[RMDB]
Chemical mapping of a 207-nucleotide RNA with 2A3.
RNA sequence: GGGAACGACUCGAGUAGAGUCGAAAAUCCUAAGUCCCUGCUUGGAUUUAUACGGACAACCAUGGGACAUGAAGCUCGGAAACGAGCUUCAACAGCCCAUGGCUAAUCCGUAUUGUCAGCAGGGAUAUGGAAAAAGAAGAGAACUUCGGUUCUCUUCGAAUUCGUUACACUUCGGUGUAACGAAUUCAAAAGAAACAACAACAACAAC
Reactivity to 2A3 in 0.01 (KOAc 150mM, MgCl2 10mM, bicine 150mM(pH8.5), 24C), signal-to-noise 1, nucleotides 027 to 156: u030c000c000u040a090a070g010u000c000c010c000u010g030c020u120u160g140g010a050u300u300u040a010u040a010c000g010g010a020c010a030a020c050c010a000u000g000g000g050a060c000a020u000g000a010a000g000c000u000c020g000g060a060a090a080c080g010a050g020c010u000u000c000a000a000c000a020g030c000c000c010a000u000g000g000c000u010a020a060u000c000c010g010u000a000u000u020g000u000c010a000g010c000a000g000g000g000a000u000a000u000g000g050a030a070a000a030a060g010a000a000g000a010g010a000a000c020u060u090c290g100g020u000u000c000u000c000u000u010c000
Notes:
The reactions ran in a buffer of 150 mM KOAc, 10 mM MgCl2 and 150 mM bicine (pH 8.5), at 24 C. Values cover nucleotides 27 to 156.